RNA sequence: GGGAACGACUCGAGUAGAGUCGAAAAUUACAAAGCAAAUACUUCUCUAAACAAUUUUAACUCUUUUUAAACGUUUUUACGUUCAAACUACCCAGUCAAAAUGAAUCCCUGCUCCUGCAACUGCUGCAAAGGAGGGACAAUUCGUUGUCCCUCCUUUAAAAGAAACAACAACAACAAC
Reactivity to 2A3 in 0.01 (KOAc 150mM, MgCl2 10mM, bicine 150mM(pH8.5), 24C), signal-to-noise 2, nucleotides 027 to 126: u130u060a060c030a020a230a000g000c010a060a090a000u020a150c010u020u000c000u020c000u150a050a230a030c050a150a180u060u090u120u190a070a030c020u110c000u010u060u010u100u210a070a060a010c020g080u000u040u000u180u280a020c000g000u000u000c020a060a110a060c020u090a020c010c000c000a000g000u020c020a020a000a030a030u120g060a060a020u060c000c000c040u060g000c000u000c020c000u000g000c000a010a030c050u150g010c000u020g000c020
Reactivity to DMS in 0.01 (KOAc 150mM, MgCl2 10mM, bicine 150mM(pH8.5), 24C), signal-to-noise 1, nucleotides 027 to 126: u000u010a140c110a140a070a210g010c080a050a030a050u010a100c040u010u000c010u000c030u000a050a060a190c090a080a020u000u000u000u000a000a220c040u020c000u080u000u060u000u000a080a040a040c060g000u000u010u050u020u030a040c010g040u010u030c050a040a040a040c150u000a040c020c000c050a090g000u000c040a030a060a030a020u000g000a110a240u040c010c020c000u000g010c060u000c000c000u000g010c070a050a110c110u030g000c000u040g000c130